[RMDB]
RNA sequence: GGGAACGACUCGAGUAGAGUCGAAAAAUUGACUCCUGCCAAGGGUGCACCUAUGAUGUGGUAACACUUCAUUUGCCCACCCCAAAGUCAUUAACAGAUUCAAGGGCAUUGGUAGCCAUCACCAGGGAGGACGUACAGGAUUCGUCCUGUACGUCCUAAAAGAAACAACAACAACAAC
Reactivity to 2A3 in 0.01 (KOAc 150mM, MgCl2 10mM, bicine 150mM(pH8.5), 24C), signal-to-noise 1, nucleotides 027 to 126: a010u120u170g030a020c040u060c040c020u030g060c060c030a080a090g070g040g000u020g000c000a020c040c010u050a050u020g020a020u020g040u000g000g060u110a170a040c020a000c000u030u040c000a030u120u000u060g000c030c010c000a020c000c000c000c000a020a150a010g020u020c000a020u070u200a070a030c040a040g090a100u150u140c080a020a230g060g000g000c010a000u060u080g000g040u030a010g030c040c000a000u090c010a020c040c020a010g000g040g050
Reactivity to DMS in 0.01 (KOAc 150mM, MgCl2 10mM, bicine 150mM(pH8.5), 24C), signal-to-noise 2, nucleotides 027 to 126: a040u010u010g020a150c040u000c050c050u010g040c030c010a070a140g080g010g010u000g020c270a050c030c040u020a040u000g000a000u000g000u010g020g010u000a170a140c010a000c010u000u000c010a020u000u020u000g020c000c210c020a210c060c000c020c020a100a160a110g000u000c040a040u000u000a090a150c250a100g000a070u000u000c050a150a100g010g000g030c020a030u000u010g010g020u000a080g020c050c040a050u040c030a070c120c050a100g000g000g030